RNA sequence: GGGAACGACUCGAGUAGAGUCGAAAACAUUAUCCAGCAAACACUAUAAAAAUGUUUGAACAGUUGAAUUUCAAACAUUUUCAUUUUGUGGAGUGGUGCUUACCAAGUGGUACAGCUCUAAGCAAGUGAAGUCGCAACAAUUCGUUGUUGCGACUUCAAAAGAAACAACAACAACAAC
Reactivity to 2A3 in 0.01 (KOAc 150mM, MgCl2 10mM, bicine 150mM(pH8.5), 24C), signal-to-noise 1, nucleotides 027 to 126: c080a010u200u130a040u190c030c070a050g050c000a030a120a000c020a000c020u070a030u020a180a000a050a000a000u000g040u000u000u000g060a090a070c020a040g130u250u220g140a230a180u010u000u000c000a000a000a000c000a000u000u050u050u000c060a040u000u070u070u110g030u020g000g010a030g040u040g090g060u000g000c000u030u010a030c040c010a220a130g110u120g220g110u030a000c070a040g000c000u000c000u100a100a100g000c000a010a010g050u010
This 177-nucleotide RNA was probed chemically with 2A3. For 2A3 the reverse transcriptase was SuperScript II with manganese. Source: RMDB library RFM100, as collected in RNAgym. The 2A3 profile rests on 432 reads. The reactions ran in a buffer of 150 mM KOAc, 10 mM MgCl2 and 150 mM bicine (pH 8.5), at 24 C.